[RMDB]
RNA sequence: GGGAACGACUCGAGUAGAGUCGAAAAAGCCAUCCGAGUGGACGUGUGUCCUCCUUCGGAUGCCCAGGUCGGACCGCGGGGAGGUGGAGAUGCCAUGCCGACCCGAAGAGGAAAGAAGGACGCGAGACAAAAUAUGUAUCUUCGGAUACAUAUUUUGAAAAGAAACAACAACAACAAC
Reactivity to DMS in 0.01 (KOAc 150mM, MgCl2 10mM, bicine 150mM(pH8.5), 24C), signal-to-noise 5, nucleotides 027 to 126: a080g020c300c010a030u000c010c000g020a020g010u010g010g010a020c020g020u000g010u000g020u000c010c000u010c040c080u010u010c000g020g010a030u000g010c010c020c020a140g000g010u010c030g010g010a280c070c050g020c040g010g000g000g000a170g010g010u000g010g000a140g000a100u010g020c040c050a070u000g020c020c020g000a180c030c010c010g000a050a060g010a100g000g000a070a100a080g010a100a060g000g000a040c060g030c050g020a090g010a190
Reactivity to 2A3 in 0.01 (KOAc 150mM, MgCl2 10mM, bicine 150mM(pH8.5), 24C), signal-to-noise 3, nucleotides 027 to 126: a000g050c040c000a010u020c000c010g000a030g070u060g000g020a010c070g230u290g120u100g010u210c010c000u050c020c050u060u030c000g000g010a000u020g020c010c010c000a040g040g070u060c020g040g030a050c020c020g010c040g060g010g000g020a050g020g020u050g040g040a160g020a100u170g060c070c010a090u170g020c020c010g030a030c000c000c020g010a070a030g040a040g080g020a070a070a020g050a010a040g050g000a020c020g020c040g060a030g030a060